[RMDB]
RNA sequence: GGGAACGACUCGAGUAGAGUCGAAAAGUCCUGCCCUGAGACCGCAACGAGAGCAUGUCGCAUCGAAUGGACUCGGGGAGUCGGCAGCUUGCCCCACGGAUGAGCGCCUAAUGCCGGCAUUCGGGAAAAUAGACUGGAUAGUUCGCUAUCCAGUCAAGCUUAACAAGUUCUUCGGAACUUGUUAAGCAAAAGAAACAACAACAACAAC
Reactivity to DMS in 0.01 (KOAc 150mM, MgCl2 10mM, bicine 150mM(pH8.5), 24C), signal-to-noise 1, nucleotides 027 to 156: g000u000c010c010u010g000c000c010c000u000g040a060g020a120c000c030g000c000a180a300c030g020a060g000a200g010c040a140u020g000u000c110g030c010a170u000c030g010a120a220u010g040g050a110c000u010c020g030g000g030g000a070g010u000c020g010g000c000a110g010c110u000u000g040c000c000c000c040a300c080g030g020a120u000g000a030g050c080g040c090c050u000a090a080u000g010c040c020g000g030c030a180u000u000c030g020g010g000a100a070a120a230u000a130g010a020c000u010g020g010a050u010a020g030u000u010c300g000c020u000a030u000c000c000a000g010u000c000a000a070
Reactivity to 2A3 in 0.01 (KOAc 150mM, MgCl2 10mM, bicine 150mM(pH8.5), 24C), signal-to-noise 4, nucleotides 027 to 156: g030u000c000c000u010g010c000c000c000u000g030a050g000a120c010c020g080c080a100a120c060g030a010g000a030g040c050a140u300g160u300c110g010c020a020u020c000g040a070a080u100g010g020a070c000u000c000g000g000g000g000a020g020u010c000g010g000c000a030g000c010u080u100g010c020c000c010c070a080c060g080g000a200u120g020a030g030c030g040c010c070u090a130a030u070g010c000c000g020g020c010a030u120u240c110g020g000g070a030a030a020a130u140a030g000a010c000u010g010g000a000u000a000g010u020u020c100g010c150u000a000u000c000c000a000g000u000c010a000a000